Chemical mapping of a 207-nucleotide RNA with DMS and 2A3. DMS (dimethyl sulfate) methylates the pairing face of unpaired adenines and cytosines. It was measured as part of the RMDB library RNAMAK. Conditions: 150 mM KOAc, 10 mM MgCl2 and 150 mM bicine (pH 8.5), 24 C. For DMS the reverse transcriptase was MarathonRT.
RNA sequence: GGGAACGACUCGAGUAGAGUCGAAAACUUCUCUUCGGAGAAGCAUGUUUCCUAAGUCUACCAACAGCAGUUCUUGUCAGCUUCGUAUCGGAAACGAUACAAGCUUGGAUUUAGAACUGACAUGGUAGAUAUGGACCUUCACACGAUUCGUCGUGAACUGAUAAUGACAGUUCGCUGUCAUUAUCAGAAAAGAAACAACAACAACAAC
Reactivity to DMS in 0.01 (KOAc 150mM, MgCl2 10mM, bicine 150mM(pH8.5), 24C), signal-to-noise 3, nucleotides 027 to 156: c000u000u010c000u000c000u000u010c300g020g000a020g000a030a020g020c010a040u010g020u000u010u000c000c010u000a070a280g010u000c000u000a010c000c000a020a120c120a200g030c010a030g010u010u010c010u000u000g030u000c020a030g010c010u000u000c210g040u010a010u000c000g040g010a210a100a300c010g020a040u010a000c010a000a000g000c000u010u000g020g020a010u000u000u010a020g010a020a000c020u000g010a030c070a300u000g020g040u000a000g010a010u000a030u010g010g000a070c040c010u000u000c040a050c040a030c000g010a220u000u000c110g010u000c070g020u000g010a070a160
Reactivity to 2A3 in 0.01 (KOAc 150mM, MgCl2 10mM, bicine 150mM(pH8.5), 24C), signal-to-noise 7, nucleotides 027 to 156: c000u000u000c000u000c000u010u070c260g140g000a010g000a010a000g010c080a070u150g080u030u090u040c020c000u030a120a020g020u000c000u000a000c010c000a040a140c040a200g030c000a000g010u000u000c000u000u010g000u030c000a000g010c000u030u110c190g010u000a000u000c000g010g040a120a050a050c010g000a000u000a000c000a000a000g000c000u030u070g060g000a020u260u170u200a010g000a000a000c000u000g010a090c010a030u030g000g000u000a000g000a000u030a020u010g030g020a040c010c060u150u150c150a030c010a000c060g120a150u150u160c230g070u020c020g000u120g030a070a080

Reactivities are rounded to 0.1 and cut off at 0 and 3.